An RNA of 207 nucleotides, treated with DMS and 2A3 and read out base by base. 2A3 adducts were read by reverse transcription with SuperScript II with manganese. For DMS, 1,437 sequencing reads were counted. Source: RMDB library OK3TST, as collected in RNAgym. The 2A3 profile rests on 646 reads. The RNA was probed in 150 mM KOAc, 10 mM MgCl2 and 150 mM bicine (pH 8.5) at 24 C.
[RMDB]
RNA sequence: GGGAACGACUCGAGUAGAGUCGAAAACUUAUCAACAUUCUUCACUACAUUCUGAAGAUGAAUUUCUACAAGGGAAAUUGUUUAUGGAGGCAGCAGAUGGCUGAAAUUCUGAUCCGAUGUGGCUGGUUAAUGCAUGAUCUGAAAACCCCUGCACUGACACUACGCGUACUUUCGAGUACGCGUAGUGAAAAGAAACAACAACAACAAC
Reactivity to DMS in 0.01 (KOAc 150mM, MgCl2 10mM, bicine 150mM(pH8.5), 24C), signal-to-noise 1, nucleotides 027 to 156: c050u000u000a120u010c030a180a140c020a040u010u020c000u000u000c000a020c020u000a150c130a190u020u000c020u020g020a010a020g000a210u020g000a120a110u000u000u000c030u000a100c080a120a080g030g000g000a060a120a040u010u010g010u000u020u000a100u010g020g020a110g020g030c050a020g010c090a070g020a050u000g070g070c020u000g000a020a010a070u000u000c020u000g040a090u000c070c070g000a080u020g020u000g030g040c010u010g020g000u000u000a030a060u030g070c010a070u020g040a170u000c010u000g020a130a070a100a170c000c020c000c010u000g010c080a120c070u020g010a200
Reactivity to 2A3 in 0.01 (KOAc 150mM, MgCl2 10mM, bicine 150mM(pH8.5), 24C), signal-to-noise 2, nucleotides 027 to 156: c040u120u090a030u290c100a040a080c010a080u090u090c020u090u040c000a020c100u180a110c120a170u230u180c040u080g030a020a030g040a020u050g010a040a170u050u090u070c070u140a130c040a060a060g030g020g080a030a060a100u080u150g030u050u140u090a100u100g020g000a010g040g000c010a010g000c000a000g010a150u090g030g070c050u020g030a050a060a040u130u040c020u010g020a040u000c040c020g030a050u010g030u000g010g000c050u030g040g040u090u090a140a020u040g000c030a040u090g000a070u040c070u080g060a010a040a080a120c020c000c000c000u030g000c050a040c050u050g040a040